Source information:
Chemical mapping of a 177-nucleotide RNA with 2A3 and DMS. Values cover nucleotides 27 to 126. Source: RMDB library TTRINS, as collected in RNAgym. The reactions ran in a buffer of 150 mM KOAc, 10 mM MgCl2 and 150 mM bicine (pH 8.5), at 24 C. For 2A3, 25,374 sequencing reads were counted. Values are in units of 0.01, from 0 to 300, in steps of 10.
[RMDB]
RNA sequence: GGGAACGACUCGAGUAGAGUCGAAAAGAUAUGGACUAGGACCCGAAGGACAGAGCGAAGAACUGUACUUAAAUCGGAAACGAUUUAAGUACAGGGAGCUCUGUCAACUUCGCCUAGUCCUAAGUCACCACUUAGUUAAGUUCGCUUAACUAAGUGGAAAAGAAACAACAACAACAAC
Reactivity to 2A3 in 0.01 (KOAc 150mM, MgCl2 10mM, bicine 150mM(pH8.5), 24C), signal-to-noise 4, nucleotides 027 to 126: g030a020u090a050u160g000g010a000c000u000a000g010g030a100c090c200c200g020a030a000g030g000a010c000a000g010a010g020c050g120a300a020g050a300a220c010u010g000u000a010c000u000u010a000a010a000u010c010g020g000a060a060a040c000g000a000u000u000u000a000a000g000u010a000c000a000g000g000g010a000g010c000u010c010u000g000u000c000a000a010c000u010u010c000g010c000c000u000a000g000u010c000c000u010a000a000g000u000c010a020
Reactivity to DMS in 0.01 (KOAc 150mM, MgCl2 10mM, bicine 150mM(pH8.5), 24C), signal-to-noise 6, nucleotides 027 to 126: g010a060u000a300u010g000g000a020c000u000a000g000g010a190c230c260c140g000a020a010g020g000a020c000a010g010a020g020c010g010a120a150g000a130a200c010u010g010u000a000c000u000u000a000a000a000u010c000g010g000a100a090a170c010g010a010u000u000u000a000a000g000u000a000c000a000g000g000g000a120g010c010u000c000u000g010u000c000a030a060c010u000u000c010g010c010c010u000a010g000u010c000c000u000a010a050g000u000c040a300